[RMDB]
RNA sequence: GGGAACGACUCGAGUAGAGUCGAAAACCACCGCUUUCGAGCGGUGGAAAAAACCGUAGGCUCCUAUGAAGCACUACCCACCGCUGACGAUUCGAAAGAGUCGCAGCGAGGUGUGGAGGAGCCUAAACGGAAAAAUCGCUCUGUUCGCAGAGCGAAAACUCACCGUUACUUUCGAGUAACGGUGAGUAAAAGAAACAACAACAACAAC
Reactivity to 2A3 in 0.01 (KOAc 150mM, MgCl2 10mM, bicine 150mM(pH8.5), 24C), signal-to-noise 1, nucleotides 027 to 156: c000c000a010c000c000g000c010u040u120u130c260g090a000g000c000g000g000u110g010g000a020a020a080a000a020a000c000c000g000u000a010g000g020c010u010c000c000u300a300u300g030a020a000g000c020a000c010u140a110c000c090c030a050c010c010g020c010u020g110a280c000g000a030u010u010c000g040a090a040a040g000a000g000u000c000g000c000a000g000c000g000a000g000g000u000g000u020g000g050a000g000g020a000g000c000c000u000a000a030a000c000g000g020a050a180a000a000a070u020c000g000c050u030c000u000g060u080u060c290g000c160a000g000a010g000c000g000a040a000a000